[RMDB]
RNA sequence: GGGAACGACUCGAGUAGAGUCGAAAAAGUCACCUAUUACGAUAGGUGACAUUUGAAUCAGCGAACAAUUCAGUUGCGAGAUUCGAGGUUUCAGUCUGAAUCAUAGUAGCCAUUACGAUGGCUACAACUCACUCCCGACUGUUCGCAGUCGGGAGAACAUAUGCUGCACGUUCGCGUGCAGCAUAUGAAAAGAAACAACAACAACAAC
Reactivity to DMS in 0.01 (KOAc 150mM, MgCl2 10mM, bicine 150mM(pH8.5), 24C), signal-to-noise 1, nucleotides 027 to 156: a080g010u000c000a040c000c000u010a000u010u000a080c180g040a130u000a000g000g000u000g020a010c010a030u000u000u000g000a100a060u000c060a180g020c010g030a060a090c060a140a080u000u010c010a140g030u010u000g010c050g000a190g010a020u000u000c010g010a210g030g060u000u010u000c010a060g010u000c030u000g000a010a060u010c130a100u010a130g030u000a000g010c000c000a050u000u000a180c260g070a160u000g000g000c000u010a000c000a030a060c100u010c030a210c000u000c000c000c000g010a030c010u010g000u000u000c200g060c030a040g020u000c000g010g000g000a000g010a000a090
Reactivity to 2A3 in 0.01 (KOAc 150mM, MgCl2 10mM, bicine 150mM(pH8.5), 24C), signal-to-noise 2, nucleotides 027 to 156: a000g000u000c000a000c000c000u010a010u000u100a090c220g030a020u010a010g000g000u010g000a010c000a010u010u030u050g030a040a040u000c020a010g130c010g010a020a000c020a040a110u060u000c010a010g010u030u000g020c020g010a040g000a010u020u000c010g010a020g050g090u070u190u170c030a030g120u080c020u030g050a010a000u070c080a100u090a140g010u000a000g020c000c000a010u030u040a030c170g180a030u020g000g000c000u000a010c000a010a000c010u060c030a100c020u000c000c000c020g000a000c010u020g050u100u140c290g000c160a000g000u000c000g000g000g000a000g000a000a000